RNA sequence: GGGAACGACUCGAGUAGAGUCGAAAAUUUGGUCCUCACACCUUUUAUCUCAACUUAGGUGGUAUACUUGUAUCUCCACAGCCUUUCGUUACAACAAUAUCAACCUUUCUCUUGAAUCUUGGAACUUAGCAAACACGGAAGCACCACACUUUUUGAAAUGAUGACCAGGAUUCGUCCUGGUCAUCAUAAAAGAAACAACAACAACAAC
Reactivity to 2A3 in 0.01 (KOAc 150mM, MgCl2 10mM, bicine 150mM(pH8.5), 24C), signal-to-noise 2, nucleotides 027 to 156: u040u020u150g040g010u020c010c050u060c030a070c010a000c000c000u080u030u010u080a180u120c070u000c020a080a110c040u040u010a020g080g000u000g000g000u040a020u050a080c080u070u080g040u100a050u050c060u010c050c000a060c000a020g050c030c030u080u120u140c010g010u020u040a000c010a050a010c020a120a150u060a070u170c110a140a110c010c000u040u300u050c100u030c030u090u100g060a120a090u050c020u000u000g000g010a000a040c010u010u010a030g060c080a050a140a050c030a000c090g010g030a010a010g010c030a040c020c000a070c020a030c060u160u060u000u050u110g180a140a150
This 207-nucleotide RNA was probed chemically with 2A3. Values are in units of 0.01, from 0 to 300, in steps of 10. It was measured as part of the RMDB library OK3TST. Conditions: 150 mM KOAc, 10 mM MgCl2 and 150 mM bicine (pH 8.5), 24 C.